The record gives the reactivity of an RNA of 177 nucleotides to DMS and 2A3. Conditions: 150 mM KOAc, 10 mM MgCl2 and 150 mM bicine (pH 8.5), 24 C. The 2A3 profile rests on 38,386 reads. Source: RMDB library TTRDES, as collected in RNAgym.
RNA sequence: GGGAACGACUCGAGUAGAGUCGAAAAGAUAUGGAGCAAUCCCAGUGUUUACUAUAAUCGCUUCUCGGAAACGAGAAGCGGUAGUAAAUUGGGAGUUGCUCCUAAGUCAAACGUUCGUUCGCGAACGCGACUUUAUUAUGUUCGCAUAAUAAAGUCGAAAAGAAACAACAACAACAAC
Reactivity to DMS in 0.01 (KOAc 150mM, MgCl2 10mM, bicine 150mM(pH8.5), 24C), signal-to-noise 9, nucleotides 027 to 126: g010a050u010a300u010g000g000a020g020c000a020a060u000c000c000c000a070g020u010g030u000u000u000a010c000u000a070u010a300a110u010c010g010c000u000u000c000u000c000g010g000a100a110a280c010g010a010g000a020a000g020c010g010g010u000a000g010u000a000a020a020u010u000g000g000g000a020g010u000u000g010c000u000c000c000u000a010a090g010u000c050a090a110a300c020g010u000u000c000g020u000u010c280g030c020g000a010a010c010g010
Reactivity to 2A3 in 0.01 (KOAc 150mM, MgCl2 10mM, bicine 150mM(pH8.5), 24C), signal-to-noise 9, nucleotides 027 to 126: g030a020u090a030u170g000g010a000g010c000a020a020u020c000c010c010a040g080u090g110u260u060u010a020c030u030a030u220a300a300u240c010g000c000u010u000c010u000c000g060g040a170a130a110c000g000a000g010a000a000g000c000g000g000u000a000g000u000a000a030a030u120u030g020g000g000a100g150u050u030g010c000u000c000c000u000a010a010g020u010c020a120a070a090c030g000u010u010c000g020u070u090c300g000c030g230a010a000c030g000